[RMDB]
RNA sequence: GGGAACGACUCGAGUAGAGUCGAAAAAAUGUGUCAAGUGCAUCAAGGAGAAGAUAGAGGAAAAACCUAUUAGGCAAACAAGCCAAAAGACAAGGAUACCCUUUCUCAAGCAUUGUUAGUUUAUGGGGAAUAUUUGGGCAUUCGUGCCCAAAUAUUCAAAAGAAACAACAACAACAAC
Reactivity to DMS in 0.01 (KOAc 150mM, MgCl2 10mM, bicine 150mM(pH8.5), 24C), signal-to-noise 2, nucleotides 027 to 126: a060a050u000g030u000g020u010c050a100a030g020u000g050c030a100u050c040a090a080g000g000a030g000a090a020g010a030u020a070g000a110g000g010a130a050a040a080a130c010c000u000a080u020u010a200g010g000c050a020a070a060c180a030a140g000c000c030a020a000a070a060g030a070c150a000a000g000g040a170u030a120c070c000c000u000u000u010c020u000c000a160a200g000c090a120u000u020g000u000u000a090g000u000u010u000a060u000g000g000g070
Reactivity to 2A3 in 0.01 (KOAc 150mM, MgCl2 10mM, bicine 150mM(pH8.5), 24C), signal-to-noise 1, nucleotides 027 to 126: a000a010u130g010u000g020u010c000a140a120g000u000g260c020a010u040c030a050a190g100g000a110g000a030a030g020a010u280a040g030a140g000g100a020a090a000a090a090c050c000u050a060u040u140a110g060g000c060a090a190a000c050a150a000g030c000c050a010a010a010a000g100a010c030a000a000g000g120a080u080a090c040c000c030u070u100u100c050u100c050a020a020g000c010a020u040u040g000u000u000a140g000u000u000u000a050u130g000g000g130